Annotation:
Chemical mapping of a 207-nucleotide RNA with DMS and 2A3. DMS adducts were read by reverse transcription with MarathonRT.
RNA sequence: GGGAACGACUCGAGUAGAGUCGAAAAGGCUGGAAUCAUGAAAAACGCUGUAGUGGAUGGCAUCGUGGCCACGGACGUCCCAGAAUUAGAGCGCACUACGCCCAUCAUGCAGAAGAAAGUUGGACAAAUCAUGCUGAUCUUGGUGUCUCUAGCUGCACGAAUAACGGACAUUCGUGUCCGUUAUUCGAAAAGAAACAACAACAACAAC
Reactivity to DMS in 0.01 (KOAc 150mM, MgCl2 10mM, bicine 150mM(pH8.5), 24C), signal-to-noise 3, nucleotides 027 to 156: g010g000c030u010g010g020a130a100u010c050a100u020g000a060a050a070a060a120c070g020c070u020g040u000a100g040u010g000g020a110u010g000g010c000a070u000c040g020u000g030g010c020c040a080c020g000g020a080c020g000u010c000c010c020a160g020a090a110u000u000a080g000a050g020c030g000c040a040c070u000a030c070g030c070c010c020a080u000c070a150u020g000c040a080g000a110a120g000a100a070a110g070u010u000g030g000a130c020a030a060a090u010c060a090u000g010c070u000g010a080u000c080u000u000g010g000u000g040u010c030u000c050u000a100g010c030u000g040c060a290
Reactivity to 2A3 in 0.01 (KOAc 150mM, MgCl2 10mM, bicine 150mM(pH8.5), 24C), signal-to-noise 4, nucleotides 027 to 156: g080g000c030u030g060g040a060a050u110c050a070u110g100a080a040a030a020a010c080g000c070u050g020u060a060g060u010g120g040a080u030g020g000c020a060u060c090g060u070g060g010c000c040a050c050g030g030a020c000g020u000c020c020c000a010g040a010a020u120u080a050g000a010g040c060g000c020a010c070u070a020c060g020c020c030c000a060u060c000a010u070g020c030a020g020a130a010g060a050a150a040g030u110u110g020g020a030c050a030a090a020u130c060a040u040g010c030u030g040a040u050c020u020u050g000g000u020g030u030c000u000c010u050a040g020c040u070g040c060a010
Reactivities are given for positions 27 through 156.
For 2A3 the reverse transcriptase was SuperScript II with manganese.
The reactions ran in a buffer of 150 mM KOAc, 10 mM MgCl2 and 150 mM bicine (pH 8.5), at 24 C.
High 2A3 reactivity points to a flexible backbone, as in loops and unpaired stretches.
It was measured as part of the RMDB library OK3TST.